[RMDB]
RNA sequence: GGGAACGACUCGAGUAGAGUCGAAAAAGGCCAGUGAUAGUGAGGGACAUUCAGAGGAGUCAGACACACAGUCAGUGUCAGGCCAUGGACAGGAUGGGCCCCAUCAGCAGAGCCACCAAGAGUCCGCCGUGCACCAUCUAUUCGUAGAUGGUGCACGAAAAGAAACAACAACAACAAC
Reactivity to 2A3 in 0.01 (KOAc 150mM, MgCl2 10mM, bicine 150mM(pH8.5), 24C), signal-to-noise 1, nucleotides 027 to 126: a000g010g030c020c010a020g060u020g060a080u070a180g090u090g150a280g010g040g000a010c010a010u010u000c000a040g030a060g150g150a080g020u050c020a000g000a030c000a000c040a000c030a030g210u180c040a030g000u030g010u030c030a000g030g000c000c030a060u090g050g010a020c040a040g000g040a020u040g030g140g130c020c000c000c000a100u040c000a030g060c090a000g060a000g070c010c000a010c000c000a050a010g020a010g200u050c000c000g010c050
Reactivity to DMS in 0.01 (KOAc 150mM, MgCl2 10mM, bicine 150mM(pH8.5), 24C), signal-to-noise 1, nucleotides 027 to 126: a030g000g050c030c020a190g000u030g030a100u000a090g000u000g040a080g000g000g000a160c010a050u000u010c050a100g000a100g020g010a090g050u000c060a150g020a010c020a030c030a120c180a080g010u010c190a060g000u000g040u000c010a060g030g000c010c050a000u000g000g000a110c170a130g010g000a050u000g000g000g000c010c000c030c060a060u000c120a050g030c070a040g040a220g010c010c000a050c060c030a040a100g030a190g030u010c010c080g010c190
Notes: An RNA of 177 nucleotides, treated with 2A3 and DMS and read out base by base. For DMS the reverse transcriptase was MarathonRT. It was measured as part of the RMDB library OK2TRN. The DMS profile rests on 732 reads.